Structure probing data (DMS) for a 177-nucleotide construct. The RNA was probed in 150 mM KOAc, 10 mM MgCl2 and 150 mM bicine (pH 8.5) at 24 C. Values cover nucleotides 27 to 126.
[RMDB]
RNA sequence: GGGAACGACUCGAGUAGAGUCGAAAAGGAAUCUCUAUUUUUUGGGAUUUUAGCGACUUAGAGAAUUUGAUGGUUGGUGGUUUGUUAAUCAUCAUUGGACUCAUCACACUUAGGAUUCGAUAUUCAUAUAAGAGUACAUCUUCGGAUGUACUCUUAUAAAAGAAACAACAACAACAAC
Reactivity to DMS in 0.01 (KOAc 150mM, MgCl2 10mM, bicine 150mM(pH8.5), 24C), signal-to-noise 1, nucleotides 027 to 126: g010g010a030a020u000c000u010c010u000a040u010u000u010u010u000u000g020g010g000a010u000u000u000u000a120g000c070g020a100c090u000u000a090g010a090g000a060a160u000u000u000g010a030u000g010g000u000u000g030g040u000g010g020u010u020u010g020u010u010a030a050u010c020a010u000c020a050u000u000g000g000a160c040u010c010a050u010c060a010c300a020c070u000u000a060g010g000a080u020u000c040g010a080u020a090u000u000c040a140u000